[RMDB]
RNA sequence: GGGAACGACUCGAGUAGAGUCGAAAACUAGACGGGUUCGCCCGUCUAGAAACGGAGCGAAUAGGGGGCUUCGCCUCCGGCCCAGGCCUUCCGCUGACCCCCAAAGCUCAACCUUCGGGUUGAGCAACAGAUAGCUCAUGUUCGCAUGAGCUAUCUGAAAAGAAACAACAACAACAAC
Reactivity to 2A3 in 0.01 (KOAc 150mM, MgCl2 10mM, bicine 150mM(pH8.5), 24C), signal-to-noise 2, nucleotides 027 to 126: c000u020a010g000a010c000g000g020g000u030u090c120g060c060c000c000g000u030c010u010a000g010a010a000a000c020g010g010a010g030c020g010a030a040u160a300g000g000g000g010g010c000u010u000c030g050c020c050u020c000c020g040g030c010c020c020a030g110g010c000c000u110u060c090c050g110c160u180g280a300c020c000c000c010c070a050a020a040g000c000u000c000a000a000c010c010u020u050c240g070g000g000u000u000g000a000g000c000a000a000
Reactivity to DMS in 0.01 (KOAc 150mM, MgCl2 10mM, bicine 150mM(pH8.5), 24C), signal-to-noise 2, nucleotides 027 to 126: c010u000a010g000a030c000g010g000g030u010u030c270g000c000c000c000g020u000c000u000a000g020a040a070a130c030g010g000a060g020c040g010a030a010u010a080g000g010g000g000g030c290u000u010c030g000c070c010u010c010c000g010g020c060c030c070a160g030g000c070c110u000u000c060c070g010c110u020g000a210c020c010c000c010c010a140a080a080g000c010u000c020a010a010c010c000u000u000c190g010g000g020u000u010g000a000g010c010a040a100